[RMDB]
RNA sequence: GGGAACGACUCGAGUAGAGUCGAAAACAUGCGAAAGGAUGGGUGCACGAGGACCGUCGCCGGAACCAGCGGUAAGCAUGCGAAAGGAUGGGCUGGCGUCAACAUGGAUGGGAAAGCAUGCCUCCAUCCGAAACGUACGUGCACCACAUGCAUGCGAUGUGGAGCUCGAAUUCGUUCGAGCUCCACAAAAAGAAACAACAACAACAAC
Reactivity to 2A3 in 0.01 (KOAc 150mM, MgCl2 10mM, bicine 150mM(pH8.5), 24C), signal-to-noise 2, nucleotides 027 to 156: c030a030u110g030c050g090a220a030a050g130g040a090u110g000g000g000u000g000c000a000c000g000a100g120g130a020c040c030g010u010c030g010c040c000g090g000a120a170c000c020a010g050c000g070g080u140a100a020g050c020a050u080g040c040g040a140a080a080g080g030a060u140g000g030g000c080u040g020g000c020g010u010c070a070a080c030a120u180g020g000a000u000g020g000g140a000a120a000g060c030a020u070g050c020c010u000c020c010a020u010c040c010g010a060a000a000c120g000u130a010c000g000u010g000c000a000c000c000a020c000a000u030g000c000a000u020g030c000g080a030

Structure probing data (2A3) for a 207-nucleotide construct. Values cover nucleotides 27 to 156. 2A3 adducts were read by reverse transcription with SuperScript II with manganese. The data come from the RNA Mapping Database (RMDB), library OK3TST. For 2A3, 913 sequencing reads were counted. The reactions ran in a buffer of 150 mM KOAc, 10 mM MgCl2 and 150 mM bicine (pH 8.5), at 24 C.